Conditions: 150 mM KOAc, 10 mM MgCl2 and 150 mM bicine (pH 8.5), 24 C.
This 177-nucleotide RNA was probed chemically with DMS and 2A3.
For 2A3 the reverse transcriptase was SuperScript II with manganese.
[RMDB]
RNA sequence: GGGAACGACUCGAGUAGAGUCGAAAAUGAUUAUGCAUCUCAAUUAGAUUCGAAAAUGAAAGAAAUUAUUGACACGCCAUUUAUAGAAGAUAUAGAUAAAGCAUUCAAAGGUAUAACGAAUGUUAAAAUCAUAGUAGCCGUUCGCGGCUACUAUGAUAAAAGAAACAACAACAACAAC
Reactivity to DMS in 0.01 (KOAc 150mM, MgCl2 10mM, bicine 150mM(pH8.5), 24C), signal-to-noise 2, nucleotides 027 to 126: u010g000a100u030u030a000u000g000c020a130u020c140u030c040a030a060u060u000a080g000a130u010u010c010g000a110a070a130a030u000g000a120a040a110g010a060a110a070u020u030a020u030u020g000a040c120a050c120g000c040c050a060u010u000u000a040u010a080g000a060a050g000a120u030a050u020a010g010a020u030a050a100a080g010c010a020u010u020c010a000a040a140g000g010u010a050u030a090a070c150g000a000a080u010g000u000u040a030a040a100
Reactivity to 2A3 in 0.01 (KOAc 150mM, MgCl2 10mM, bicine 150mM(pH8.5), 24C), signal-to-noise 2, nucleotides 027 to 126: u110g030a030u020u130a050u200g150c030a060u030c000u080c020a010a300u110u100a090g180a300u050u160c130g110a030a060a160a030u290g080a050a150a090g080a020a120a020u120u000a030u040u110g000a000c000a020c060g000c120c020a010u000u240u140a210u050a060g080a080a100g120a080u090a060u090a100g090a040u070a150a200a000g010c000a000u000u000c040a080a000a150g180g010u290a070u040a190a050c090g030a000a000u000g020u110u200a070a120a000

The 2A3 profile rests on 1,142 reads. Source: RMDB library OK1LIB, as collected in RNAgym.